RNA sequence: GGGAACGACUCGAGUAGAGUCGAAAAUUUAAAAUUAAACAUUGCUCGUGUUUAUCAAACACAAUAUGUUUAAAAGCUUUAAUCGCAUCUUCAUAAGUUAUUAAGGAUUCAUGUCGGGUAUGCGGCAGCCAUACUGACGAUUCGUCGUCAGUAUGGCAAAAGAAACAACAACAACAAC
Reactivity to 2A3 in 0.01 (KOAc 150mM, MgCl2 10mM, bicine 150mM(pH8.5), 24C), signal-to-noise 1, nucleotides 027 to 126: u100u140u050a050a120a000a000u030u020a020a000a010c020a010u030u060g020c080u100c160g000u010g040u000u020u040a300u100c110a080a010a000c020a010c000a020a060u030a010u040g000u010u010u000a060a070a040a000g060c050u110u100u130a000a060u140c040g000c010a000u020c010u160u000c030a040u050a230a000g040u050u090a110u130u110a120a050g170g000a090u000u120c050a020u110g070u040c020g050g060g070u120a020u120g040c000g000g010c060a000
Reactivity to DMS in 0.01 (KOAc 150mM, MgCl2 10mM, bicine 150mM(pH8.5), 24C), signal-to-noise 1, nucleotides 027 to 126: u000u040u040a000a070a100a170u000u000a000a020a000c000a020u000u000g020c300u020c270g000u000g020u000u000u000a140u010c210a170a010a000c000a020c000a070a040u000a000u020g000u000u000u000a000a070a010a150g000c130u000u000u010a000a010u000c030g010c040a010u000c020u020u000c090a040u000a060a030g010u000u000a060u020u000a060a160g020g010a050u000u000c080a030u010g000u000c060g030g030g030u030a070u000g040c010g000g020c280a100

An RNA of 177 nucleotides, treated with 2A3 and DMS and read out base by base.
Conditions: 150 mM KOAc, 10 mM MgCl2 and 150 mM bicine (pH 8.5), 24 C.
For DMS the reverse transcriptase was MarathonRT.
For DMS, 680 sequencing reads were counted.
The 2A3 profile rests on 1,002 reads.
Reactivities are rounded to 0.1 and cut off at 0 and 3.
Values cover nucleotides 27 to 126.